[RMDB]
RNA sequence: GGGAACGACUCGAGUAGAGUCGAAAAGAAAGAAAGAAAGUUGUAGAGCAAUCUGUCUAAGUAGGGGUAAAUUACUCUUAAAAAAAAAAUCCUAGGUAGUUCUCCCUUCUAGUAAAGCGUCUUGUAAAACUACUAAGCAGUUCGCUGCUUAGUAGUUAAAAGAAACAACAACAACAAC
Reactivity to DMS in 0.01 (KOAc 150mM, MgCl2 10mM, bicine 150mM(pH8.5), 24C), signal-to-noise 2, nucleotides 027 to 126: g010a170a160a100g010a050a140a090g000a090a160a100g020u000u000g010u000a100g040a120g000c090a120a080u030c090u010g000u020c010u010a070a070g030u040a010g000g010g000g030u010a030a050a040u000u000a030c010u070c050u010u010a000a000a000a000a000a000a230a180a100a140u010c130c080u000a020g010g020u000a000g010u000u050c100u010c000c000c000u000u010c030u000a050g000u020a030a050a070g020c200g000u000c030u020u010g030u010a010a050
Reactivity to 2A3 in 0.01 (KOAc 150mM, MgCl2 10mM, bicine 150mM(pH8.5), 24C), signal-to-noise 1, nucleotides 027 to 126: g130a000a040a000g080a050a200a000g060a090a090a000g000u080u030g100u220a100g010a000g070c000a000a050u160c080u140g120u010c010u080a000a260g020u120a100g020g040g050g040u170a090a160a130u040u020a060c020u080c000u210u080a040a220a290a000a000a000a000a050a000a000u040c010c020u000a040g070g040u000a020g040u050u000c050u130c040c000c000u010u040c000u020a060g000u110a040a050a000g000c020g000u020c000u020u020g060u070a000a120